[RMDB]
RNA sequence: GGGAACGACUCGAGUAGAGUCGAAAACAGGGCCCGGAAACAGGUCAAGACAGUGAGGUUCCAGACCCCUGGACGCUUUUCGUGGUUUUGCAAGCGCCGGAGAGCCUUCUGGCACACUCCCCGGUUGUAAGGUCAACUAAUUCGUUAGUUGACCUUAAAAAGAAACAACAACAACAAC
Reactivity to 2A3 in 0.01 (KOAc 150mM, MgCl2 10mM, bicine 150mM(pH8.5), 24C), signal-to-noise 1, nucleotides 027 to 126: c020a010g010g060g000c020c020c000g010g000a000a060a010c060a040g000g160u090c040a080a050g120a050c010a040g010u030g070a270g160g000u130u000c070c010a040g060a080c050c010c010c020u020g040g030a050c020g030c090u060u090u020u050c080g210u220g090g010u040u040u060u070g010c000a070a080g030c030g000c040c020g010g020a060g020a000g070c010c000u180u030c060u110g030g000c050a010c000a010c060u040c010c000c000c000g050g050u050u050g050
Reactivity to DMS in 0.01 (KOAc 150mM, MgCl2 10mM, bicine 150mM(pH8.5), 24C), signal-to-noise 6, nucleotides 027 to 126: c060a100g010g010g010c030c010c010g010g000a060a050a090c110a070g000g000u010c030a080a080g010a180c050a070g010u010g000a110g010g010u000u010c050c080a100g010a130c110c120c200c010u000g000g010a050c110g020c040u000u010u000u010c030g000u000g010g000u000u000u010u000g010c110a090a100g010c140g000c020c010g000g000a050g000a090g000c050c020u010u000c080u000g000g000c090a070c150a100c100u000c010c010c010c070g010g000u000u010g010
Background
Structure probing data (2A3 and DMS) for a 177-nucleotide construct. The DMS profile rests on 6,107 reads. Reactivities are rounded to 0.1 and cut off at 0 and 3.